[RMDB]
RNA sequence: GGGAACGACUCGAGUAGAGUCGAAAAGGAUGUUAAUAUGCAGAUUAUGGGUGUGGUUAUGCAGAGUGGUGUGAGAAAAGUUACAUAUGGUACUGCGCAUUGGUUGUUUGCGACCCUUGUCUCAACCCUAAUACGUACCCUUCGGGGUACGUAUUAGAAAAGAAACAACAACAACAAC
Reactivity to 2A3 in 0.01 (KOAc 150mM, MgCl2 10mM, bicine 150mM(pH8.5), 24C), signal-to-noise 1, nucleotides 027 to 126: g000g000a040u080g030u080u070a090a010u140a130u260g020c050a010g040a100u120u050a030u250g000g000g040u060g020u050g000g000u080u110a060u190g050c010a000g020a020g100u070g020g010u030g000u010g040a030g070a020a060a000a020g040u020u030a060c000a040u140a080u150g070g000u070a070c070u100g020c020g000c010a050u070u020g120g000u000u000g000u060u060u020g040c010g010a020c000c000c000u000u070g060u000c010u030c000a050a060c010c010
Reactivity to DMS in 0.01 (KOAc 150mM, MgCl2 10mM, bicine 150mM(pH8.5), 24C), signal-to-noise 5, nucleotides 027 to 126: g010g000a070u000g000u000u010a060a090u000a080u010g020c050a060g000a080u000u010a070u010g010g010g030u000g020u000g000g010u000u000a050u010g020c050a060g010a090g010u000g000g000u010g030u010g010a080g000a070a050a060a060g010u000u000a070c100a090u010a060u000g020g010u010a050c060u000g000c060g010c050a050u010u000g020g010u010u000g010u000u000u000g010c030g000a120c050c020c030u010u000g000u000c040u000c040a060a110c220c070
Chemical mapping of a 177-nucleotide RNA with 2A3 and DMS. Values cover nucleotides 27 to 126. DMS adducts were read by reverse transcription with MarathonRT. For 2A3, 859 sequencing reads were counted.